[RMDB]
Structure probing data (2A3) for a 207-nucleotide construct. It was measured as part of the RMDB library OK3TST. 2A3 adducts were read by reverse transcription with SuperScript II with manganese.
RNA sequence: GGGAACGACUCGAGUAGAGUCGAAAACUCGCGAGCCCAUUGAGGCGUGGGGAGCGACAUGAAUCAGCCUCGAUUAGAUGUGGUCGACAGUACCGCGGCGUACAGCGACCUAGUUAGAAGCCGCAAAACCGGAAGAGAUGACGCUCGACGGACGUCACAGGUGGGAUGGUUUCGACCAUCCCACCUGAAAAGAAACAACAACAACAAC
Reactivity to 2A3 in 0.01 (KOAc 150mM, MgCl2 10mM, bicine 150mM(pH8.5), 24C), signal-to-noise 1, nucleotides 027 to 156: c000u020c010g000c000g030a300g060c000c000c000a000u100u270g000a070g000g010c000g000u000g000g010g020g100a000g000c040g050a050c030a070u200g130a110a240u050c020a100g010c000c000u060c070g060a090u220u220a150g010a160u220g110u030g050g060u000c080g000a090c010a140g020u030a000c000c130g040c050g010g000c000g000u000a000c020a080g020c000g000a000c000c050u000a000g000u040u050a140g060a250a000g000c000c000g040c020a000a000a000a190c050c080g060g000a170a000g000a190g000a080u090g000a000c070g000c090u000c050g030a020c030g020g000a020c010g030u020c030a030